Annotation:
Chemical mapping of a 177-nucleotide RNA with 2A3 and DMS.

RNA sequence: GGGAACGACUCGAGUAGAGUCGAAAAGCAACUUCCACAACAGACUACAUGUGAGCGUUGCGGGUUUAUAUCUAGCAAUCGAAUUUGCAAAGCAUGUAUGCUACUUGAAGGACUUAAUAAAGGGAUAACUACGAUGCCUGUUCGCAGGCAUCGUAGUAAAAGAAACAACAACAACAAC
Reactivity to 2A3 in 0.01 (KOAc 150mM, MgCl2 10mM, bicine 150mM(pH8.5), 24C), signal-to-noise 1, nucleotides 027 to 126: g060c090a040a100c010u040u030c030c050a030c050a040a030c030a050g090a100c010u020a010c010a010u000g070u060g030a070g050c000g000u000u000g010c000g000g000g000u000u220u020a300u020a000u110c030u070a070g000c000a010a020u140c070g220a140a260u160u030u200g040c000a070a060a030g000c000a000u030g040u030a030u150g050c010u040a080c030u000u030g050a090a000g010g050a000c030u060u080a100a010u070a170a140a070g050g040g060a040u020a170
Reactivity to DMS in 0.01 (KOAc 150mM, MgCl2 10mM, bicine 150mM(pH8.5), 24C), signal-to-noise 2, nucleotides 027 to 126: g030c070a030a050c030u000u000c010c110a140c130a070a120c180a110g010a080c110u010a040c010a040u000g020u000g000a300g000c060g000u000u000g000c010g000g000g000u000u000u010a110u020a010u000c000u000a080g070c040a030a020u000c280g000a050a080u010u000u030g020c040a010a120a210g010c010a010u020g000u010a000u010g000c020u000a040c130u000u000g010a060a020g000g010a150c100u000u000a020a050u010a050a080a080g010g000g000a140u000a070
About this RNA:
2A3 is a SHAPE reagent: it acylates the 2'-hydroxyl of flexible nucleotides of all four kinds. Reactivities are rounded to 0.1 and cut off at 0 and 3. 2A3 adducts were read by reverse transcription with SuperScript II with manganese.